Background: An RNA of 177 nucleotides, treated with DMS and 2A3 and read out base by base. For 2A3, 799 sequencing reads were counted.
RNA sequence: GGGAACGACUCGAGUAGAGUCGAAAAGUCAACGAUGAAGCAGGCCGCCAUAACGCUCUGAUCGACGAGCUGGCCACUGUGGUCAUCAAAAAAAUAGCUGAGUGCCGCUCCGUUGACCAAGUCAUAGUGGUGCUUUAAUGUUCGCAUUAAAGCACCAAAAAGAAACAACAACAACAAC
Reactivity to DMS in 0.01 (KOAc 150mM, MgCl2 10mM, bicine 150mM(pH8.5), 24C), signal-to-noise 2, nucleotides 027 to 126: g020u010c040a040a070c040g030a110u040g020a080a100g030c000a070g020g010c040c040g030c100c140a140u000a070a150c300g000c010u000c050u010g010a100u050c100g010a060c170g000a130g020c020u000g010g030c000c030a090c040u000g000u000g030g050u010c050a060u030c120a010a020a050a060a020a000a120u040a070g000c150u000g000a070g050u000g020c000c000g000c000u000c060c010g000u000u000g000a020c000c040a120a080g040u030c050a110u010a010g000
Reactivity to 2A3 in 0.01 (KOAc 150mM, MgCl2 10mM, bicine 150mM(pH8.5), 24C), signal-to-noise 2, nucleotides 027 to 126: g020u000c000a000a000c010g070a080u180g110a040a000g000c080a130g000g050c070c060g000c040c000a000u040a040a170c170g100c020u000c030u270g100a150u190c130g070a040c040g000a030g000c020u020g000g000c040c000a000c150u100g040u130g020g010u060c000a050u000c010a070a010a010a010a010a010a010u160a030g000c060u090g080a090g040u260g000c000c010g000c000u000c000c000g010u000u000g020a020c020c000a090a030g020u120c030a070u080a100g180
The RNA was probed in 150 mM KOAc, 10 mM MgCl2 and 150 mM bicine (pH 8.5) at 24 C.